[RMDB]
RNA sequence: GGGAACGACUCGAGUAGAGUCGAAAAUUUGGCGUAUCAUUGAUGGGAGAAGAACCUGCCAAUAUGGUCACGUUAUGGAAGGUGACGUGGAAUUUAACGACGAUGAAGAUGAUCUCAACGGCCUCGGCUCCGAGGUGACAUUCGUGUCACCUCGGAGAAAAGAAACAACAACAACAAC
Reactivity to 2A3 in 0.01 (KOAc 150mM, MgCl2 10mM, bicine 150mM(pH8.5), 24C), signal-to-noise 1, nucleotides 027 to 126: u050u010u110g010g000c050g060u120a030u150c010a030u000u100g030a050u120g080g020g000a130g000a110a100g020a050a030c000c010u020g000c000c020a010a010u100a040u100g040g000u070c040a000c040g000u010u030a030u050g130g080a100a030g100g000u000g000a000c020g010u010g000g040a110a160u120u090u070a160a030c070g070a000c090g010a010u070g130a010a040g050a010u110g050a080u020c030u020c000a050a070c030g040g000c000c030u010c010g000g000
Reactivity to DMS in 0.01 (KOAc 150mM, MgCl2 10mM, bicine 150mM(pH8.5), 24C), signal-to-noise 1, nucleotides 027 to 126: u000u010u010g000g020c070g010u010a030u000c090a070u020u020g010a210u000g010g000g010a080g000a140a160g000a100a150c100c010u000g000c020c020a020a130u010a060u010g000g020u000c000a010c030g030u000u010a050u010g000g010a080a050g030g040u000g000a040c050g030u020g000g040a120a070u000u000u000a090a090c150g000a010c020g000a070u000g030a050a070g000a120u030g000a050u020c040u000c040a100a080c150g010g030c020c020u000c080g000g000